[RMDB]
RNA sequence: GGGAACGACUCGAGUAGAGUCGAAAAGGGUUCGUGAGAGGAGGUGAAACUAAUGAGCCUUAUACCAGAGCUUGCUCUUACUAUUAUAACAGAUGUUAUAGCUGGAAUUAUCUUGUAUUUCGUCUGCCUAGAUUUGUUUGUUCGCAAACAAAUCUAGAAAAGAAACAACAACAACAAC
Reactivity to DMS in 0.01 (KOAc 150mM, MgCl2 10mM, bicine 150mM(pH8.5), 24C), signal-to-noise 5, nucleotides 027 to 126: g000g000g010u020u000c040g020u000g000a080g010a120g010g000a070g010g010u010g010a090a080a080c100u010a070a080u020g000a070g000c020c030u000u000a120u010a160c060c050a080g000a130g010c060u010u010g000c020u000c030u000u020a080c100u010a090u010u000a050u020a050a120c020a060g000a050u000g010u000u000a020u000a040g010c030u000g010g010a070a080u010u020a050u010c040u000u000g000u000a060u010u000u000c030g020u000c050u000g000c300
Reactivity to 2A3 in 0.01 (KOAc 150mM, MgCl2 10mM, bicine 150mM(pH8.5), 24C), signal-to-noise 9, nucleotides 027 to 126: g040g000g010u040u040c040g010u070g060a110g010a050g090g050a050g030g020u090g080a080a060a030c060u090a130a070u090g040a020g000c010c000u060u070a100u060a050c040c030a020g010a000g060c040u060u090g020c010u020c010u070u070a100c050u030a050u300u050a110u070a140a040c010a020g070a080u090g050u060u040a040u030a050g110c020u030g020g060a070a080u220u050a090u170c030u020u060g030u060a080u000u070u030c020g010u010c030u010g030c010
The record gives the reactivity of an RNA of 177 nucleotides to DMS and 2A3. For DMS the reverse transcriptase was MarathonRT. Source: RMDB libraries RFM100 and RFMREP, as collected in RNAgym.